[RMDB]
RNA sequence: GGGAACGACUCGAGUAGAGUCGAAAAGACCCCUACCGAAAGGGACAGGUGCCGAAAGCACAGGAAGGAAGGGUCAAGAACAGGUCAGUGAUGCCCUCAGAUGGUCUGGGCUGCACGCGCACUACAGGCAGAUCAUCUGGUUCGCCAGAUGAUCUGCAAAAGAAACAACAACAACAAC
Reactivity to 2A3 in 0.01 (KOAc 150mM, MgCl2 10mM, bicine 150mM(pH8.5), 24C), signal-to-noise 3, nucleotides 027 to 126: g050a020c000c000c000c030u020a060c000c080g060a180a090a060g010g020g000a010c060a050g020g020u000g000c000c050g130a080a030a010g000c010a000c020a080g100g030a050a000g070g060a010a020g090g000g010u080c090a080a020g050a060a020c090a040g030g030u060c000a010g050u030g040a070u160g000c000c030c000u050c000a040g020a080u150g020g060u100c020u020g000g080g000c010u100g000c030a000c060g080c000g000c030a010c000u160a040c050a040g130
Reactivity to DMS in 0.01 (KOAc 150mM, MgCl2 10mM, bicine 150mM(pH8.5), 24C), signal-to-noise 2, nucleotides 027 to 126: g000a130c190c010c000c030u050a140c000c010g000a090a080a070g000g000g030a110c020a030g080g060u000g000c000c090g010a030a040a300g000c000a030c120a060g000g000a060a070g000g000a300a050g000g000g000u040c060a210a080g000a080a160c060a060g000g000u000c110a020g000u000g000a060u000g000c030c030c000u000c140a140g000a090u000g000g060u030c000u000g000g160g050c030u000g020c160a020c080g010c080g020c070a160c150u000a050c030a060g040